[RMDB]
RNA sequence: GGGAACGACUCGAGUAGAGUCGAAAAUAUGGGCAGUUCGCUGCCCAUACGAGCGGAGUCCGGCACUAUGAGGCCGCAGCGUUGGUGCGUAGCCGCGGUGCAGAGACCAAGCCUUCGGGCUUGGUAAUCACAGGAAGUUCUUCGGAACUUCCUGUGAAAAAGAAACAACAACAACAAC
Reactivity to DMS in 0.01 (KOAc 150mM, MgCl2 10mM, bicine 150mM(pH8.5), 24C), signal-to-noise 1, nucleotides 027 to 126: u000a000u000g000g000g010c020a000g010u000u010c180g030c010u000g010c000c000c000a000u000a000c010g000a090g020c060g000g010a110g010u000c010c010g020g010c050a050c040u000a100u000g010a150g020g010c000c030g020c050a020g010c040g010u010u010g020g000u000g000c080g020u010a140g000c030c010g000c060g020g000u000g010c000a080g000a130g010a070c000c000a000a000g000c000c000u000u010c180g020g020g030c010u000u000g000g010u000a030a070
Chemical mapping of a 177-nucleotide RNA with DMS. The RNA was probed in 150 mM KOAc, 10 mM MgCl2 and 150 mM bicine (pH 8.5) at 24 C. Reactivities are given for positions 27 through 126. For DMS, 1,360 sequencing reads were counted.